Conditions: 150 mM KOAc, 10 mM MgCl2 and 150 mM bicine (pH 8.5), 24 C. Chemical mapping of a 177-nucleotide RNA with DMS. For DMS, 1,205 sequencing reads were counted.
RNA sequence: GGGAACGACUCGAGUAGAGUCGAAAAGGUCUGAUCUUCGGAUCAGACCAACUCUGAUUCCCAAUAGCUGCGUAUCUUGGCUAUGACGGAUAGGCGUUGCCACUCAGGGGGGUUUCGACCCCCCUAAUCUGAUUGCUGAUUUCGAUCAGCAAUCAGAAAAAGAAACAACAACAACAAC
Reactivity to DMS in 0.01 (KOAc 150mM, MgCl2 10mM, bicine 150mM(pH8.5), 24C), signal-to-noise 2, nucleotides 027 to 126: g010g020u000c000u000g000a000u000c000u000u010c180g000g000a040u000c010a000g000a010c000c000a030a000c040u000c010u000g020a220u020u000c000c000c050a200a020u000a070g000c010u010g000c280g010u000a070u000c150u000u000g010g000c010u000a020u000g000a190c180g020g010a030u030a080g000g010c050g000u000u000g030c010c010a150c300u000c200a020g010g040g000g030g000g000u000u000u000c140g000a050c000c010c000c000c000c000u000a000a010
It was measured as part of the RMDB library M2PK50.